[RMDB]
RNA sequence: GGGAACGACUCGAGUAGAGUCGAAAAGAUAUGGAUGAACUUCGAUAAGCUGGCCAUCGGAAACGAUGGCAGCUUUUGACGAAGAAUCCUAAGUCAAAAGCACGAUAACGUUCGCGUUAUCGUGCAACAAGGUAAGUCAGUUCGCUGACUUACCUUGAAAAGAAACAACAACAACAAC
Reactivity to 2A3 in 0.01 (KOAc 150mM, MgCl2 10mM, bicine 150mM(pH8.5), 24C), signal-to-noise 2, nucleotides 027 to 126: g060a010u120a050u130g010g000a020u050g060a150a200c000u010u000c010g050a070u040a120a010g000c010u070g270g200c020c000a000u010c030g010g020a100a030a040c010g010a000u000g000g000c000a000g010c010u010u000u010u030g020a010c020g000a000a000g040a040a020u000c000c000u040a220a030g080u050c070a030a140a000a080g020c000a010c010g010a010u000a000a000c000g030u060u080c300g020c000g120u000u000a000u000c000g000u000g010c000a000a000
Reactivity to DMS in 0.01 (KOAc 150mM, MgCl2 10mM, bicine 150mM(pH8.5), 24C), signal-to-noise 5, nucleotides 027 to 126: g010a040u000a300u010g000g010a010u000g000a160a090c010u000u000c000g020a150u000a020a010g020c000u000g010g010c000c000a000u000c000g010g000a090a070a140c010g020a010u000g000g000c000a000g010c000u000u000u000u020g020a180c120g010a010a000g010a090a030u000c000c000u000a050a150g010u000c040a080a090a110a130g010c000a010c000g000a020u000a000a000c000g010u000u020c210g010c020g010u000u000a000u000c000g030u000g000c000a010a030